[RMDB]
RNA sequence: GGGAACGACUCGAGUAGAGUCGAAAACUGCGAUAGAUGCUGCUCUUGAUUUGGCUCCAAAUUCUCCGAUAGUUAAAGCUGCUCAGAAAGAACAACAAAAGGCAGCGGCGGAUAUCGAAAAAAUUAAUCAUCUACUUCAUUUCGAUGAAGUAGAUGAAAAAGAAACAACAACAACAAC
Reactivity to 2A3 in 0.01 (KOAc 150mM, MgCl2 10mM, bicine 150mM(pH8.5), 24C), signal-to-noise 3, nucleotides 027 to 126: c020u050g010c000g020a030u050a060g040a020u090g020c010u020g000c000u000c000u070u080g050a110u140u040u100g020g010c020u010c040c000a010a140a140u110u000c040u000c020c020g070a110u060a080g020u010u110a080a070a030g010c010u010g000c020u020c030a010g210a100a120a010g060a080a030c030a040a000c010a030a190a060a020g030g000c000a010g000c000g000g000c010g010g030a030u010a010u030c000g010a080a030a010a030a000a040u220u210a040a040
Reactivity to DMS in 0.01 (KOAc 150mM, MgCl2 10mM, bicine 150mM(pH8.5), 24C), signal-to-noise 3, nucleotides 027 to 126: c060u000g020c040g000a090u000a040g010a260u030g010c020u010g000c000u000c050u000u000g020a180u000u000u000g020g000c060u010c020c030a050a080a120u000u000c020u000c050c020g010a050u000a040g010u010u000a050a270a160g020c010u000g000c020u000c050a080g010a060a060a150g000a100a080c080a070a090c080a030a100a100a110g000g000c060a010g000c000g000g010c280g010g000a200u000a020u000c010g000a000a020a060a090a070a040u010u010a100a150
An RNA of 177 nucleotides, treated with 2A3 and DMS and read out base by base.
The reactions ran in a buffer of 150 mM KOAc, 10 mM MgCl2 and 150 mM bicine (pH 8.5), at 24 C.
The DMS profile rests on 2,200 reads.